Source: RMDB library RNAMAK, as collected in RNAgym. Chemical mapping of a 207-nucleotide RNA with 2A3. Reactivities are given for positions 27 through 156. 2A3 adducts were read by reverse transcription with SuperScript II with manganese.

RNA sequence: GGGAACGACUCGAGUAGAGUCGAAAAGUCAAACUUCGGUUUGACAAAAAUCCUAAGUCUUCCUUUGAUCGAUAUGAGGCGAAGAACUAUCGGAAACGAUAGGGAGCCUUGCAUAUCGGGAGGAAGAUAUGGAAAAAAACUCAAGUUCGCUUGAGAAGACAUUAGAGGACUUCGGUCCUCUAAUGUCAAAAGAAACAACAACAACAAC
Reactivity to 2A3 in 0.01 (KOAc 150mM, MgCl2 10mM, bicine 150mM(pH8.5), 24C), signal-to-noise 1, nucleotides 027 to 156: g000u000c000a010a010a000c000u080u120c110g070g000u000u000u000g000a000c000a020a120a000a000a020u090c040c020u070a140a090g030u000c020u030u080c010c060u210u030u070g140a170u200c030g000a000u000a000u010g010a010g010g010c000g090a290a070g020a000a050c010u000a000u000c000g010g010a050a000a080c010g000a020u000a000g000g010g010a000g050c010c000u020u060g020c000a000u010a000u020c010g000g020g020a010g000g010a000a000g000a000u000a010u000g000g060a090a060a000a000a060a050a090c040u040c000a000a000g060u070u070c190g140c020u010u010g000a010g010a070a030